[RMDB]
RNA sequence: GGGAACGACUCGAGUAGAGUCGAAAAGGAAAUGUAGGAUAUGGAGAAGCACCACCUACUGGUGUAAUAACUGGAGAUACAACAGGUGCUAUUAUUGGAGCAUUAAAAGAUCAUAUUAUUAAAACCAUCAUUAUUUACUCUUCGGAGUAAAUAAUGAAAAAGAAACAACAACAACAAC
Reactivity to DMS in 0.01 (KOAc 150mM, MgCl2 10mM, bicine 150mM(pH8.5), 24C), signal-to-noise 4, nucleotides 027 to 126: g010g010a070a070a070u000g000u000a030g000g010a070u000a040u010g010g000a300g000a140a160g010c080a040c020c010a080c040c040u010a050c040u000g000g010u000g010u000a030a030u000a050a030c180u010g010g010a070g020a090u000a060c110a070a070c220a180g030g010u000g000c030u000a070u010u010a140u020u010g020g010a030g010c010a020u010u010a050a060a100a120g000a040u000c000a040u000a100u000u000a050u000u000a040a050a070a060c010c020a090
Reactivity to 2A3 in 0.01 (KOAc 150mM, MgCl2 10mM, bicine 150mM(pH8.5), 24C), signal-to-noise 2, nucleotides 027 to 126: g060g010a060a010a060u090g020u030a010g000g050a020u070a030u180g070g030a180g020a160a010g030c000a010c010c010a000c000c000u090a140c020u040g000g000u050g000u050a020a060u020a130a000c050u040g000g140a120g010a020u070a060c050a110a010c040a150g070g000u000g000c020u000a000u130u080a050u080u200g090g040a020g000c010a030u000u230a100a110a170a000g020a000u040c010a010u100a060u200u140a060u010u170a050a120a050a050c030c000a010
An RNA of 177 nucleotides, treated with DMS and 2A3 and read out base by base.
For DMS, 2,493 sequencing reads were counted.
For 2A3, 1,339 sequencing reads were counted.